[RMDB]
RNA sequence: GGGAACGACUCGAGUAGAGUCGAAAAGAAACAUGGUUCGCCAUGUUUCAAAGAAGCUCAUAAUGACGCAAACAACGGCGUCGCCGUGAGCAAAGGGCGAAAAAAGACUUAUCUUCGGAUAAGUCAACAUACAUGCGAAGUUCGCUUCGCAUGUAUGAAAAGAAACAACAACAACAAC
Reactivity to DMS in 0.01 (KOAc 150mM, MgCl2 10mM, bicine 150mM(pH8.5), 24C), signal-to-noise 6, nucleotides 027 to 126: g000a010a010a020c000a000u000g000g010u000u010c240g020c000c000a010u000g000u010u000u000c010a060a120a110g000a150a120g020c000u000c000a020u000a070a100u000g000a010c000g000c000a040a090a170c250a070a120c240g000g000c000g010u000c000g010c170c110g010u000g000a010g000c000a070a080a100g000g000g020c110g010a000a040a080a090a080a080g000a010c000u000u000a010u000c000u000u010c170g020g000a020u000a000a000g010u000c000a040a070
Reactivity to 2A3 in 0.01 (KOAc 150mM, MgCl2 10mM, bicine 150mM(pH8.5), 24C), signal-to-noise 5, nucleotides 027 to 126: g000a000a000a000c000a000u010g000g020u030u050c080g040c050c000a010u010g000u000u000u000c000a000a000a000g070a070a020g000c000u000c010a020u040a110a060u140g010a010c000g000c020a060a200a210c090a170a100c170g090g000c000g010u000c000g000c010c020g030u010g000a000g000c010a010a040a020g040g000g020c100g070a090a020a000a000a000a090g010a000c000u010u010a000u020c010u040u090c250g050g000a000u010a000a000g000u020c000a000a000